Overview
The data come from the RNA Mapping Database (RMDB), library TTRDEL. Chemical mapping of a 177-nucleotide RNA with DMS and 2A3. Conditions: 150 mM KOAc, 10 mM MgCl2 and 150 mM bicine (pH 8.5), 24 C. High 2A3 reactivity points to a flexible backbone, as in loops and unpaired stretches.
RNA sequence: GGGAACGACUCGAGUAGAGUCGAAAAGAUAUGGAUACCCAGGACUUUUGACGCCACUCGGAAACGAGUGAGCGAUAAGUCCGGGUAUCCUAAGUCAAAGUUGUGAUACGUUCGCGUAUCACAACAACAUGCAUAACAACUUCGGUUGUUAUGCAUGAAAAGAAACAACAACAACAAC
Reactivity to DMS in 0.01 (KOAc 150mM, MgCl2 10mM, bicine 150mM(pH8.5), 24C), signal-to-noise 6, nucleotides 027 to 126: g000a020u000a230u000g000g000a010u000a000c000c000c000a110g050g010a010c000u000u000u010u010g010a290c040g000c000c000a000c000u000c000g020g000a050a050a100c000g010a010g010u000g000a070g020c000g010a020u000a010a020g010u000c000c000g000g000g010u000a000u000c000c000u000a010a050g000u000c020a100a110a140g010u000u000g010u000g000a000u000a010c000g010u010u020c230g010c010g010u000a000u000c000a000c000a000a000c010a100a160
Reactivity to 2A3 in 0.01 (KOAc 150mM, MgCl2 10mM, bicine 150mM(pH8.5), 24C), signal-to-noise 7, nucleotides 027 to 126: g010a010u050a010u070g000g000a000u020a010c020c040c120a250g030g010a010c040u110u140u220u300g080a040c020g000c010c000a000c000u010c000g000g020a030a030a020c000g000a000g000u000g020a030g000c010g010a010u060a160a020g000u000c000c000g000g000g010u000a000u000c000c000u000a010a000g020u000c060a120a080a110g000u010u000g000u000g000a000u000a010c010g010u020u050c300g000c010g120u000a000u010c000a000c000a000a000c000a000a010